[RMDB]
RNA sequence: GGGAACGACUCGAGUAGAGUCGAAAAGGAUGCUGUUUGGCCGGUAUUAGCAUCGAUGAGCGAGGCUGCGAAGCAGUCGAGACGUAUGACCGGCCUUUUGCGUCGAGACGAAAGUCGAGCUCAUCGAGGGAUGCACGGUGUUCGCAUCGUGUAUCCCAAAAGAAACAACAACAACAAC
Reactivity to DMS in 0.01 (KOAc 150mM, MgCl2 10mM, bicine 150mM(pH8.5), 24C), signal-to-noise 9, nucleotides 027 to 126: g010g000a090u010g010c020u000g010u010u010u010g000g010c000c000g000g000u010a080u040u030a070g000c130a270u000c000g000a010u000g010a020g010c000g000a300g000g010c000u000g000c050g000a120a160g020c050a070g020u000c000g000a230g000a010c000g020u000a080u020g000a040c000c000g000g000c000c000u000u000u010u010g010c000g010u000c000g000a300g000a010c000g000a070a100a090g010u000c000g000a230g000c000u000c010a010u000c000g000a040
Reactivity to 2A3 in 0.01 (KOAc 150mM, MgCl2 10mM, bicine 150mM(pH8.5), 24C), signal-to-noise 9, nucleotides 027 to 126: g140g020a070u170g040c070u080g070u230u230u160g040g000c010c010g010g000u070a110u150u230a100g050c050a050u030c010g000a000u000g000a000g000c000g010a010g010g000c010u010g020c090g130a120a040g040c050a010g010u000c000g000a010g000a010c000g020u050a090u220g060a030c000c000g010g000c010c000u030u040u050u040g000c000g000u000c000g000a010g000a030c020g030a110a040a010g010u010c010g000a010g000c000u000c000a000u000c000g000a010
Conditions: 150 mM KOAc, 10 mM MgCl2 and 150 mM bicine (pH 8.5), 24 C. Chemical mapping of a 177-nucleotide RNA with DMS and 2A3. Source: RMDB library OK1LIB, as collected in RNAgym. 2A3 is a SHAPE reagent: it acylates the 2'-hydroxyl of flexible nucleotides of all four kinds. For 2A3, 39,597 sequencing reads were counted.